[RMDB]
RNA sequence: GGGAACGACUCGAGUAGAGUCGAAAAAAUAGCGGGUCAAGGUACAACGCAGAGAGAUAGGCUCAUCCCAAGUUCUCUUCGGAGUACCAAGACUUCGGUACAGAAGAGAUACCGACUCUUCAUAGAAUUCCCCUAACAGUUUCGACUGUUAGGGGAAAAAAGAAACAACAACAACAAC
Reactivity to DMS in 0.01 (KOAc 150mM, MgCl2 10mM, bicine 150mM(pH8.5), 24C), signal-to-noise 2, nucleotides 027 to 126: a050a090u000a090g000c030g010g000g000u000c000a000a300g000g030u010a040c050a040a260c000g050c090a010g000a030g050a030g000a110u000a270g000g000c080u020c300a050u020c240c000c000a010a130g020u020u000c000u000c000u000u000c010g000g030a230g000u000a000c000c000a010a300g030a010c030u020u020c030g000g000u000a020c250a050g000a000a000g000a000g000a090u010a150c010c010g020a130c020u000c010u000u000c020a080u030a090g030a130a130